[RMDB]
RNA sequence: GGGAACGACUCGAGUAGAGUCGAAAAGUACUAUCACCAUCGUACCUAAUAGCAGUGACAUUUAUCUGGUUAGGUACUAGGAUGGCAGUGUAAAUGUCGCUUAGUAUCUAUCCGAUGGUGAUAGUAGGCUUGUCGUAGAUUUCGAUCUAUGACGAGCAAAAGAAACAACAACAACAAC
Reactivity to DMS in 0.01 (KOAc 150mM, MgCl2 10mM, bicine 150mM(pH8.5), 24C), signal-to-noise 9, nucleotides 027 to 126: g000u000a000c000u000a000u000c000a010c000c000a000u000c000g010u020a100c130c100u020a080a080u020a000g020c090a050g010u010g010a140c220a100u020u020u030a050u020c070u010g000g020u010u000a010g000g000u000a000c010u000a000g000g010a040u020g010g010c000a000g010u040g020u050a080a100a080u010g010u000c000g000c000u000u000a010g010u000a010u000c010u000a040u020c090c000g010a010u000g000g000u000g010a010u000a000g010u000a010g000
Reactivity to 2A3 in 0.01 (KOAc 150mM, MgCl2 10mM, bicine 150mM(pH8.5), 24C), signal-to-noise 9, nucleotides 027 to 126: g040u000a000c000u000a000u000c000a000c000c000a000u000c000g010u040a060c010c040u100a050a050u050a020g050c030a010g030u020g090a080c050a100u100u120u070a130u060c030u030g040g000u010u010a010g000g000u010a010c000u000a000g010g020a090u020g000g000c000a000g010u030g070u200a060a120a090u010g000u010c000g000c010u010u010a000g000u010a010u020c010u000a020u010c030c010g000a000u000g000g000u000g000a000u000a000g000u000a000g010
The record gives the reactivity of an RNA of 177 nucleotides to DMS and 2A3. For DMS, 64,233 sequencing reads were counted.